[RMDB]
RNA sequence: GGGAACGACUCGAGUAGAGUCGAAAAAACAACACUUACAUGGUGAUGGAGGAUCCCACUUAUACCAGUCUGGGUGGGGAUGGGCUGGGAGAGUGGUAUGUGGAAAACCUUGAAGGGCAGGUGAUGUGCACCCUUCCCAUCCCUAAUAUAAUGCACGAUAUCUAUAGCCGUUCGCGGCUAUAGAUAUAAAAGAAACAACAACAACAAC
Reactivity to 2A3 in 0.01 (KOAc 150mM, MgCl2 10mM, bicine 150mM(pH8.5), 24C), signal-to-noise 1, nucleotides 027 to 156: a010a000c200a030a000c040a030c020u130u230a040c030a080u080g040g010u070g040a080u070g080g030a070g070g000a080u060c040c030c020a000c000u060u070a100u100a080c000c010a000g000u010c000u080g050g090g060u080g010g000g010g010a050u000g000g010g000c000u030g000g000g000a080g020a000g000u020g000g020u070a060u160g080u080g070g010a000a000a030a030c040c000u040u070g020a120a070g000g000g010c020a010g000g010u020g010a060u060g010u000g050c000a110c000c000c000u060u030c000c000c010a000u000c040c010c000u000a030a020u050a010u020a040a020u090g020c000a000c040g020

The record gives the reactivity of an RNA of 207 nucleotides to 2A3. The 2A3 profile rests on 636 reads. 2A3 is a SHAPE reagent: it acylates the 2'-hydroxyl of flexible nucleotides of all four kinds. Reactivities are given for positions 27 through 156.